[RMDB]
This 177-nucleotide RNA was probed chemically with DMS.
The reactions ran in a buffer of 150 mM KOAc, 10 mM MgCl2 and 150 mM bicine (pH 8.5), at 24 C.
DMS adducts were read by reverse transcription with MarathonRT.
Reactivities are given for positions 27 through 126.
Reactivities are rounded to 0.1 and cut off at 0 and 3.

RNA sequence: GGGAACGACUCGAGUAGAGUCGAAAAGAUAUGGACUUCGAAGACAGCAGGUUUAUGGAGGGAGUGUGCAAUCGGAAACGAUUGUCACACGAAGAACUCCAUAAACCUGUCGAGAAGUCCUAAGUCAGUCCUCGCUAUAGUUCGCUAUAGCGAGGACAAAAGAAACAACAACAACAAC
Reactivity to DMS in 0.01 (KOAc 150mM, MgCl2 10mM, bicine 150mM(pH8.5), 24C), signal-to-noise 1, nucleotides 027 to 126: g000a100u000a300u010g000g010a040c000u000u000c000g010a100a110g000a120c300a060g000c070a010g010g050u020u000u000a000u000g000g000a030g060g000g020a090g000u010g030u010g060c000a010a000u000c000g010g000a230a040a110c030g000a020u000u000g000u000c000a000c030a000c010g010a130a060g000a070a190c000u000c000c000a000u020a010a030a000c000c000u010g000u000c000g000a100g000a020a010g000u000c000c000u020a010a020g010u000c100a210